Source: RMDB library RFM100, as collected in RNAgym. This 177-nucleotide RNA was probed chemically with 2A3.

RNA sequence: GGGAACGACUCGAGUAGAGUCGAAAAACGAGGACUAUCGUUACGACGAUAGUCCUCGACCUCGUGGCCUGGUCUCCAUUAUUUGAGAUGAGUUACAUCUUGGAGGUGAGGACGUGCCUCGUGAUAAGCGCGGGAUAUUCUUCGGAAUAUCCCGCGCAAAAGAAACAACAACAACAAC
Reactivity to 2A3 in 0.01 (KOAc 150mM, MgCl2 10mM, bicine 150mM(pH8.5), 24C), signal-to-noise 1, nucleotides 027 to 126: a000c000g000a000g000g030a000c000u000a000u010c010g010u050u040a080c300g030a000c030g030a000u000a000g000u000c000c000u000c000g000a000c000c030u000c000g000u010g030g040c040c070u120g010g040u010c000u000c030c040a100u060u220a300u100u000u180g000a000g000a000u050g000a040g300u100u080a170c000a000u000c000u000u110g000g010a060g000g000u020g030a080g010g000a000c000g000u000g000c000c000u000c000g120u070g040a060u020a230a020
The RNA was probed in 150 mM KOAc, 10 mM MgCl2 and 150 mM bicine (pH 8.5) at 24 C. For 2A3 the reverse transcriptase was SuperScript II with manganese.